[RMDB]
The record gives the reactivity of an RNA of 207 nucleotides to 2A3.
2A3 adducts were read by reverse transcription with SuperScript II with manganese.
The RNA was probed in 150 mM KOAc, 10 mM MgCl2 and 150 mM bicine (pH 8.5) at 24 C.
Reactivities are given for positions 27 through 156.
The 2A3 profile rests on 1,027 reads.
RNA sequence: GGGAACGACUCGAGUAGAGUCGAAAAGCGUACUACCGUUUCGGGUGUGCGGGAGGAGAUAGCUGCACUCCCAAAUAGGAGUGCCGAAACCGAAGAACGCACAUCUCUAGCGUGAACGGUAUCGCAAAAGACCCAUCAACUUCGGUUGAUGGGUCAAGCAUGUUUAUGCCUUCGGGCAUAAACAUGCAAAAGAAACAACAACAACAAC
Reactivity to 2A3 in 0.01 (KOAc 150mM, MgCl2 10mM, bicine 150mM(pH8.5), 24C), signal-to-noise 2, nucleotides 027 to 156: g000c000g050u080a120c120u010a000c000c000g000u050u030u010c050g000g000g000u020g000u000g000c020g010g000g000a030g060g010a130g050a100u250a070g110c120u030g030c000a010c000u010c010c010c000a080a190a000u160a030g010g000a000g000u000g000c000c040g060a110a030a020c010c000g040a120a030g020a110a020c000g000c010a030c000a010u000c030u000c040u100a060g060c080g160u300g000a000a000c010g000g000u010a020u300c000g000c000a020a010a030a030g000a000c000c010c010a000u000c000a000a000c000u050u040c250g160g000u000u000g000a000u000g000g000g000u000c000a010a000